[RMDB]
RNA sequence: GGGAACGACUCGAGUAGAGUCGAAAAGAAUUUGUCCUCGAGGGAGCGCGCUUAAUCGAGUUGUGCGACAAAAGCAAGAUCCCGCUACUGCUUUUGCAAAACAUCCCAGGUUUCAUGAUCGGCUGGACUCCCCAUUUUAGUUCGCUAAAAUGGGGAGAAAAGAAACAACAACAACAAC
Reactivity to 2A3 in 0.01 (KOAc 150mM, MgCl2 10mM, bicine 150mM(pH8.5), 24C), signal-to-noise 1, nucleotides 027 to 126: g030a080a200u150u090u170g040u000c010c010u030c040g040a100g040g050g030a020g040c010g000c010g000c010u060u110a090a050u170c090g030a030g060u130u110g040u090g060c030g000a030c060a020a020a000a000g000c000a020a000g020a080u060c000c010c000g000c030u050a090c020u000g000c000u000u000u050u010g040c030a000a000a080a050c040a040u030c000c000c030a030g090g040u000u060u120c090a060u130g130a060u040c050g090g000c060u060g000g000a020
Reactivity to DMS in 0.01 (KOAc 150mM, MgCl2 10mM, bicine 150mM(pH8.5), 24C), signal-to-noise 2, nucleotides 027 to 126: g010a090a090u010u010u020g000u000c030c010u000c090g030a130g000g010g010a040g020c040g000c110g010c000u000u010a050a140u030c100g000a070g010u000u010g020u000g020c060g020a120c020a020a020a030a010g000c020a050a110g000a110u010c030c000c030g030c070u010a160c110u000g020c000u000u020u010u000g010c030a080a050a060a060c150a100u000c000c020c000a090g000g030u010u000u010c040a030u010g010a100u000c080g000g010c020u020g000g010a260